[RMDB]
RNA sequence: GGGAACGACUCGAGUAGAGUCGAAAAUAGAGGACGUGUCACUCAAGUGACAGGAACGUUAUUAAAAGCGGUAGUGCCAGGUGUGCGCAUCGGUGAGUUAUGUUACUUACGUAACCCUGACAACAGCUGAUUCAGUUUAAUUCGUUAAACUGAAUCAAAAAGAAACAACAACAACAAC
Reactivity to DMS in 0.01 (KOAc 150mM, MgCl2 10mM, bicine 150mM(pH8.5), 24C), signal-to-noise 9, nucleotides 027 to 126: u000a070g010a090g010g010a280c030g010u000g010u000c010a020c010u010c300a160a190g020u000g010a020c010a040g000g010a070a240c040g000u010u000a060u000u000a060a080a130a100g010c040g000g020u000a060g020u000g010c010c020a040g000g010u000g020u000g000c050g000c060a040u010c130g010g000u000g010a050g010u000u010a060u010g000u000u000a040c080u000u000a050c070g010u000a030a040c020c030c010u000g000a030c030a020a040c070a130g010c150
Reactivity to 2A3 in 0.01 (KOAc 150mM, MgCl2 10mM, bicine 150mM(pH8.5), 24C), signal-to-noise 9, nucleotides 027 to 126: u120a010g090a040g050g040a020c130g080u020g000u030c000a010c020u150c180a220a140g010u000g010a000c010a010g040g050a050a010c020g040u050u040a070u070u170a120a130a020a010g020c030g050g030u060a050g030u100g060c010c010a040g010g050u060g020u040g040c050g000c050a050u060c030g010g030u050g030a070g030u070u050a050u100g080u050u030a070c040u100u040a000c020g000u000a010a050c000c000c020u020g010a010c020a060a000c010a040g020c040
This 177-nucleotide RNA was probed chemically with DMS and 2A3. The data come from the RNA Mapping Database (RMDB), library OK2TRN. For 2A3, 25,831 sequencing reads were counted. The reactions ran in a buffer of 150 mM KOAc, 10 mM MgCl2 and 150 mM bicine (pH 8.5), at 24 C. 2A3 adducts were read by reverse transcription with SuperScript II with manganese.